Conditions: 150 mM KOAc, 10 mM MgCl2 and 150 mM bicine (pH 8.5), 24 C.
The record gives the reactivity of an RNA of 177 nucleotides to DMS and 2A3.
For 2A3, 10,196 sequencing reads were counted.
RNA sequence: GGGAACGACUCGAGUAGAGUCGAAAAUCUAAUGUCUUCGGACAUUAGAAAAGGCGGAGGCUCGCACCUAGCGACCGGCGCAAGGACGCACGUGACAGCGAAAAAUCACCGAGUUCGCUCGGUGAAACCUAACUACAUGGUUCGCCAUGUAGUUAGGAAAAGAAACAACAACAACAAC
Reactivity to DMS in 0.01 (KOAc 150mM, MgCl2 10mM, bicine 150mM(pH8.5), 24C), signal-to-noise 5, nucleotides 027 to 126: u000c000u000a000a000u000g010u000c000u000u020c210g010g010a020c000a010u000u000a000g000a010a040a080a120g010g010c020g010g010a160g010g020c130u000c040g030c020a110c080c080u010a100g010c020g000a060c050c020g000g010c040g020c050a110a080g010g010a130c030g000c040a050c080g010u000g010a110c110a090g010c040g020a010a040a060a090a110u000c000a010c000c000g000a010g020u000u020c220g000c010u000c010g010g010u000g000a000a030a040
Reactivity to 2A3 in 0.01 (KOAc 150mM, MgCl2 10mM, bicine 150mM(pH8.5), 24C), signal-to-noise 4, nucleotides 027 to 126: u010c000u000a000a000u000g010u000c000u030u030c160g100g000a000c000a000u000u000a000g000a010a110a000a010g070g020c030g020g120a040g080g000c090u020c060g030c010a080c020c100u030a040g010c010g040a030c000c030g060g090c020g000c030a050a030g090g000a030c020g020c030a030c060g050u080g040a030c040a030g020c030g080a070a040a000a000a100u030c000a000c000c000g000a000g010u060u070c190g020c070u000c010g000g010u000g000a020a000a000